[RMDB]
RNA sequence: GGGAACGACUCGAGUAGAGUCGAAAAACAUAGGUUGGGCCAUAGGCGCUGCGGUUCAUCAUCUUGCCCUCGCCAGGACCGCUGCCGUUCUACUACUUGGCGUCGCGGAUACCGGGUUGGAAAACAAUGCUUCAGUUUUGUUCGCAAAACUGAAGCAAAAAGAAACAACAACAACAAC
Reactivity to DMS in 0.01 (KOAc 150mM, MgCl2 10mM, bicine 150mM(pH8.5), 24C), signal-to-noise 1, nucleotides 027 to 126: a110c100a110u000a080g010g010u000u000g010g030g050c040c030a030u020a020g020g000c010g000c010u010g040c010g020g030u000u010c050a090u010c100a050u010c050u000u010g030c010c010c000u010c050g000c010c020a050g020g010a060c050c020g010c000u010g010c090c040g010u000u000c120u010a110c140u010a110c130u010u010g030g000c040g030u000c070g040c030g010g010a110u010a040c010c010g000g010g050u000u000g010g010a060a080a130a030c130a090a090

Chemical mapping of a 177-nucleotide RNA with DMS. Conditions: 150 mM KOAc, 10 mM MgCl2 and 150 mM bicine (pH 8.5), 24 C.